Chemical mapping of a 177-nucleotide RNA with DMS and 2A3. DMS adducts were read by reverse transcription with MarathonRT.
RNA sequence: GGGAACGACUCGAGUAGAGUCGAAAAUCUGCUGCACCGUGUGGUCGAUCCGGCUGAGCACGGCGUAGACCUCGUCGUUGCGGUUCUCCCGCAGCGCGGUGCUCACCACCUGCCCGACGUCGGCGCAGUAGCAGCCACUAUUCGUAGUGGCUGCUACAAAAGAAACAACAACAACAAC
Reactivity to DMS in 0.01 (KOAc 150mM, MgCl2 10mM, bicine 150mM(pH8.5), 24C), signal-to-noise 3, nucleotides 027 to 126: u000c060u000g000c050u000g000c010a010c010c010g000u000g010u000g010g000u000c040g000a080u000c090c110g000g010c120u010g000a080g010c050a030c010g020g020c040g030u010a070g000a020c030c100u010c250g010u010c000g030u010u010g020c000g020g000u000u020c300u000c300c000c010g010c020a030g000c000g010c020g000g020u000g020c010u000c020a080c090c070a120c100c040u010g030c090c020c050g020a090c120g010u010c010g010g000c110g000c020a020
Reactivity to 2A3 in 0.01 (KOAc 150mM, MgCl2 10mM, bicine 150mM(pH8.5), 24C), signal-to-noise 3, nucleotides 027 to 126: u010c010u060g050c030u030g020c020a010c010c030g090u150g070u070g230g030u010c010g010a030u030c060c060g000g030c120u140g110a030g050c160a050c060g060g000c010g010u030a020g020a010c020c050u040c040g110u060c010g040u030u020g010c000g030g000u110u090c110u110c050c000c000g000c000a000g020c000g000c020g060g000u010g000c020u010c000a030c030c020a050c010c020u040g020c000c030c020g090a140c060g150u160c030g000g000c020g000c000a000
The RNA was probed in 150 mM KOAc, 10 mM MgCl2 and 150 mM bicine (pH 8.5) at 24 C. For 2A3 the reverse transcriptase was SuperScript II with manganese.